[RMDB]
RNA sequence: GGGAACGACUCGAGUAGAGUCGAAAAUUAGUCUUGUGUGAUGACUCAUAGAUCGCAAAGGCCUUACAGCUUUGCCCCGUGGCCCGGGACCUGCAGGUGGUUGAUUACACAAGGGCCGUGAAGACUGUGGUUAGACCGUAUUCGUACGGUCUAACCAAAAAGAAACAACAACAACAAC
Reactivity to DMS in 0.01 (KOAc 150mM, MgCl2 10mM, bicine 150mM(pH8.5), 24C), signal-to-noise 1, nucleotides 027 to 126: u000u020a150g010u000c010u010u010g010u000g010u000g000a030u000g050a150c030u010c160a110u020a200g030a140u020c050g040c020a080a080a160g000g020c010c080u000u000a070c190a110g030c090u010u010u000g000c030c020c000c030g020u010g010g000c120c000c020g010g020g020a050c020c040u000g010c100a100g000g000u010g000g000u000u020g000a050u020u010a010c070a020c030a080a120g020g010g040c020c030g040u020g010a090a100g010a070c050u020g040